RNA sequence: GGGAACGACUCGAGUAGAGUCGAAAAGAUAUGGAAACAGAACGUCGAUAAGCUGGUGUCGGAAACGACACGCAGCUUUUGACGACGAGCUGUUUCCUAAGUCAAAAGUUUGAGUUCGCUCAAACAAGAUAUACCCCAGGUUCGCCUGGGGUAUAUCAAAAGAAACAACAACAACAAC
Reactivity to DMS in 0.01 (KOAc 150mM, MgCl2 10mM, bicine 150mM(pH8.5), 24C), signal-to-noise 3, nucleotides 027 to 126: g000a050u000a300u010g010g010a000a000a010c000a000g000a030a040c010g020u010c010g010a160u020a020a020g030c000u000g010g020u010g010u000c000g000g000a090a070a190c010g000a010c000a000c000g030c000a000g010c000u000u000u010u010g050a180c130g000a020c000g000a080g010c000u010g010u000u000u000c000c000u000a010a030g010u000c020a080a150a110a130g000u000u000u000g010a030g000u000u020c300g010c000u000c010a000a000a000c000a180a110
Reactivity to 2A3 in 0.01 (KOAc 150mM, MgCl2 10mM, bicine 150mM(pH8.5), 24C), signal-to-noise 1, nucleotides 027 to 126: g020a000u050a050u160g000g000a000a000a000c000a000g030a080a020c010g000u010c050g050a120u040a300a000g000c000u020g030g000u000g000u020c010g020g040a110a030a010c020g030a020c000a050c010g040c000a020g030c000u020u000u010u020g050a030c010g030a010c010g000a020g000c010u000g000u000u000u000c010c000u010a030a020g020u020c040a050a040a000a190g000u000u010u010g030a010g020u000u240c300g040c150u000c010a020a010a040c000a010a040